An RNA of 177 nucleotides, treated with 2A3 and DMS and read out base by base. The 2A3 profile rests on 3,255 reads. Reactivities are given for positions 27 through 126.
RNA sequence: GGGAACGACUCGAGUAGAGUCGAAAAGAUAUGGAUCGAGGUCGGAGCAACAGCUUGGCUCGGAAACGAGCCAAGACAUGCUUCGACCCGAUCCUAAGUCAAACGAUUAGAGUUCGCUCUAAUCGAAUCACGUGUAGAGGUUCGCCUCUACACGUGAAAAAGAAACAACAACAACAAC
Reactivity to 2A3 in 0.01 (KOAc 150mM, MgCl2 10mM, bicine 150mM(pH8.5), 24C), signal-to-noise 1, nucleotides 027 to 126: g020a050u070a030u200g000g000a000u000c050g060a270g020g000u020c010g000g020a010g030c000a020a080c080a100g100c000u000u000g000g020c000u000c010g000g030a040a100a070c000g060a000g030c000c030a000a000g010a010c000a030u010g000c000u000u000c000g000a010c000c000c000g000a000u000c010c000u010a010a010g010u020c000a030a050a160c040g000a030u020u000a000g030a000g030u130u160c300g070c120u000c020u000a000a010u000c000g050a030a150
Reactivity to DMS in 0.01 (KOAc 150mM, MgCl2 10mM, bicine 150mM(pH8.5), 24C), signal-to-noise 2, nucleotides 027 to 126: g020a010u020a300u020g010g010a000u000c000g000a140g020g000u000c000g010g000a020g010c000a020a170c300a200g000c010u040u000g000g000c000u010c000g000g000a060a040a230c010g000a020g000c000c000a000a000g010a030c070a190u000g010c020u000u000c000g020a000c000c000c000g000a000u000c000c000u000a040a080g020u000c010a090a150a200c020g000a020u000u000a000g010a010g040u010u030c300g000c000u000c000u000a000a000u000c000g000a080a090